[RMDB]
RNA sequence: GGGAACGACUCGAGUAGAGUCGAAAAUGCCGAGCACUCCCUCCCUCCGCCGGGUCUGAAAGAACGAUUUUCGGCUGGAGAUGACAGCGCGGUUUUUGAGGACGUCUUUUGUCCGUGCGGUACCGCCAGCGUACAUAGCUUUCGAGCUAUGUACGCUAAAAGAAACAACAACAACAAC
Reactivity to DMS in 0.01 (KOAc 150mM, MgCl2 10mM, bicine 150mM(pH8.5), 24C), signal-to-noise 3, nucleotides 027 to 126: u020g010c000c040g010a110g000c050a150c100u000c010c010c000u000c110c050c000u000c010c010g010c000c010g010g010g000u000c000u000g010a120a170a090g020a100a170c090g000a040u000u000u060u020c000g010g000c000u040g050g010a040g030a090u020g010a070c210a080g010c070g020c010g000g000u000u010u010u010u020g010a130g010g000a020c040g010u040c090u010u030u010u000g020u000c000c020g030u020g040c210g000g000u020a050c010c020g030c030c120
Reactivity to 2A3 in 0.01 (KOAc 150mM, MgCl2 10mM, bicine 150mM(pH8.5), 24C), signal-to-noise 4, nucleotides 027 to 126: u130g000c000c020g020a020g010c020a020c090u030c000c000c000u020c010c000c000u010c010c010g000c010c010g020g000g000u000c010u000g120a080a060a040g110a160a060c070g020a020u020u030u170u230c000g020g000c150u250g010g020a010g000a010u140g050a030c040a080g040c010g000c000g120g050u060u030u010u060u080g120a050g020g010a030c030g100u170c190u090u210u090u150g030u030c010c000g000u040g010c000g000g000u020a000c020c000g000c020c010